[RMDB]
This 207-nucleotide RNA was probed chemically with 2A3.
The reactions ran in a buffer of 150 mM KOAc, 10 mM MgCl2 and 150 mM bicine (pH 8.5), at 24 C.
RNA sequence: GGGAACGACUCGAGUAGAGUCGAAAACGACAGCUACCAACGGCUCAUCGGCGCCGACAAGUGCGUCUUCGUAGACUACAAAACCAGCACCGACACGAACCCAGACAAGCUCGACGACUACUACCGUAGCCGCCACGCAACUGAAACAGGCAAGGAAGCGGCAAAUUACAUUCGUGUAAUUUGCCGCAAAAGAAACAACAACAACAAC
Reactivity to 2A3 in 0.01 (KOAc 150mM, MgCl2 10mM, bicine 150mM(pH8.5), 24C), signal-to-noise 2, nucleotides 027 to 156: c030g080a020c030a040g000c030u080a090c050c020a100a060c040g000g000c020u020c000a070u230c100g100g000c030g030c010c000g040a020c060a100a040g010u090g030c050g050u000c010u070u100c100g070u060a010g010a120c040u010a060c110a020a050a040a020c020c020a000g020c000a010c020c060g080a050c010a020c100g030a040a020c030c040c040a000g020a070c050a080a000g000c040u010c020g060a070c000g030a060c060u050a100c000u030a130c070c020g000u000a000g000c020c010g050c040c000a030c060g080c010a020a070c020u080g040a000a000a010c000a010g000g080c000a000a040g200g040a180a090